[RMDB]
RNA sequence: GGGAACGACUCGAGUAGAGUCGAAAAGAGUACUACCGAACCACCAGCAGUUCGAGCCUCUGAAGAGCGUCUAAGCAAUGGGGAUAUAUAUUUACUGGAGAAUGGGCUCAACCUCUUCCUCUGGGUGACACCGUGAAUAUUUCGAUAUUCACGGUGUAAAAGAAACAACAACAACAAC
Reactivity to DMS in 0.01 (KOAc 150mM, MgCl2 10mM, bicine 150mM(pH8.5), 24C), signal-to-noise 6, nucleotides 027 to 126: g010a070g020u000a070c080u000a130c110c020g000a040a050c030c040a130c090c050a060g010c090a100g010u000u000c050g010a090g010c170c020u000c050u000g000a100a080g000a080g010c050g010u010c040u010a070a090g010c070a070a090u020g000g000g010g010a110u000a050u010a080u010a040u000u000u010a070c060u000g000g000a080g010a050a060u000g010g010g000c050u010c140a060a080c110c010u000c030u000u000c030c020u000c050u000g010g010g010u010g000
Reactivity to 2A3 in 0.01 (KOAc 150mM, MgCl2 10mM, bicine 150mM(pH8.5), 24C), signal-to-noise 3, nucleotides 027 to 126: g040a010g030u050a070c000u040a050c010c030g070a040a020c000c020a040c000c020a020g030c040a010g050u010u040c020g010a040g020c010c010u080c010u050g080a110a030g030a030g040c020g020u040c090u110a040a030g040c020a030a080u120g010g020g020g020a000u010a000u000a000u000a040u080u190u080a080c020u030g010g020a040g050a110a050u070g030g020g000c030u030c070a040a140c020c020u030c010u040u040c030c010u000c020u020g040g020g060u060g050